Structure probing data (2A3 and DMS) for a 177-nucleotide construct.
The reactions ran in a buffer of 150 mM KOAc, 10 mM MgCl2 and 150 mM bicine (pH 8.5), at 24 C.
Reactivities are given for positions 27 through 126.
2A3 is a SHAPE reagent: it acylates the 2'-hydroxyl of flexible nucleotides of all four kinds.
Values are in units of 0.01, from 0 to 300, in steps of 10.
RNA sequence: GGGAACGACUCGAGUAGAGUCGAAAAUCUUGGAGUCCCACCACACCUAAAACCACGCUUUGAAGGAUCUGCCAAGCUCACUUUUAAUCAUGAGAAAGAAAUUACCCACAUGGAGACAGCAGAAAAUAAGUACUGCAGUUUUCGAACUGCAGUACUUAAAAGAAACAACAACAACAAC
Reactivity to 2A3 in 0.01 (KOAc 150mM, MgCl2 10mM, bicine 150mM(pH8.5), 24C), signal-to-noise 3, nucleotides 027 to 126: u060c040u030u090g060g040a020g020u000c000c000c000a000c000c000a010c000a000c010c020u060a000a060a030a010c050c000a030c060g030c040u100u040u060g080a110a050g030g050a060u000c010u030g030c010c050a080a000g060c030u020c010a060c040u050u080u060u300a150a200u120c080a060u110g050a010g090a070a050a000g110a020a120a020u110u140a100c010c010c000a030c000a040u130g010g020a040g010a050c010a020g070c010a010g030a000a020a000a010u050
Reactivity to DMS in 0.01 (KOAc 150mM, MgCl2 10mM, bicine 150mM(pH8.5), 24C), signal-to-noise 1, nucleotides 027 to 126: u000c060u030u000g080g000a050g010u000c000c070c020a150c030c000a070c000a000c070c040u030a050a030a230a120c020c050a030c090g020c110u000u050u030g000a010a100g000g070a100u030c020u030g000c000c000a070a230g000c050u000c040a120c170u000u000u040u000a160a240u000c090a020u000g070a070g000a060a030a100g010a010a090a060u050u000a050c080c000c040a040c060a070u030g030g010a020g000a040c040a040g000c040a180g000a060a060a120a010u030